[RMDB]
RNA sequence: GGGAACGACUCGAGUAGAGUCGAAAAGUGCAGGAUCGCGCAGUAGAGCCAAUUCUGGCAAUAGAACCCCUACCUCUGGUGUAACACCUGAUAUGGCUGAUCAAAUUGCUAGUCUUGUUCUGGCUAAAUGAACAGGACAAUUCGUUGUCCUGUUCAUAAAAGAAACAACAACAACAAC
Reactivity to 2A3 in 0.01 (KOAc 150mM, MgCl2 10mM, bicine 150mM(pH8.5), 24C), signal-to-noise 2, nucleotides 027 to 126: g050u040g020c020a010g000g100a090u110c050g010c000g000c110a010g020u130a050g030a020g060c040c020a000a010u080u000c060u030g010g000c000a020a000u110a070g080a100a110c000c000c000c030u000a060c010c020u080c050u070g000g000u040g030u080a170a060c030a020c080c000u010g010a010u030a040u120g020g000c020u030g010a090u100c040a060a090a080u060u020g000c010u020a010g000u000c030u020u070g030u070u000c010u040g030g000c000u050a130a110
Reactivity to DMS in 0.01 (KOAc 150mM, MgCl2 10mM, bicine 150mM(pH8.5), 24C), signal-to-noise 4, nucleotides 027 to 126: g010u020g010c040a080g000g010a060u000c100g030c130g040c060a110g010u010a060g010a120g000c080c030a040a180u010u010c030u010g000g010c020a040a070u010a100g000a040a110c080c100c010c020u020a090c140c070u000c050u000g000g010u000g010u010a090a090c120a040c020c010u000g000a060u010a090u000g000g010c070u000g000a100u010c090a070a070a090u000u000g010c020u000a060g010u000c050u000u000g000u000u000c030u000g000g000c050u010a050a100